An RNA of 177 nucleotides, treated with DMS and read out base by base. Conditions: 150 mM KOAc, 10 mM MgCl2 and 150 mM bicine (pH 8.5), 24 C. Source: RMDB library TTRDEL, as collected in RNAgym. DMS adducts were read by reverse transcription with MarathonRT.
[RMDB]
RNA sequence: GGGAACGACUCGAGUAGAGUCGAAAAGAUAUGGACCACACGGCUAGGCCAUCGGAAACGAUGGGCCUUGGACCCGUGUGGUCCUAAGUCAAACGGUUCGCUCAAUGUUCGCAUUGAGCGAACCGAACACUAGCGCAUUCUUCGGAAUGCGCUAGUGAAAAGAAACAACAACAACAAC
Reactivity to DMS in 0.01 (KOAc 150mM, MgCl2 10mM, bicine 150mM(pH8.5), 24C), signal-to-noise 2, nucleotides 027 to 126: g000a010u000a300u010g010g030a050c010c010a010c000a020c000g050g000c010u000a010g020g000c000c000a020u000c000g010g010a110a100a180c000g010a010u000g040g010g020c000c000u000u000g010g010a130c300c000c020g030u010g010u010g000g040u000c000c000u000a000a110g010u000c010a100a100a300c020g000g000u000u000c000g030c000u000c010a010a010u000g000u000u000c160g020c010a000u000u010g000a020g000c000g000a000a000c000c000g030a000a070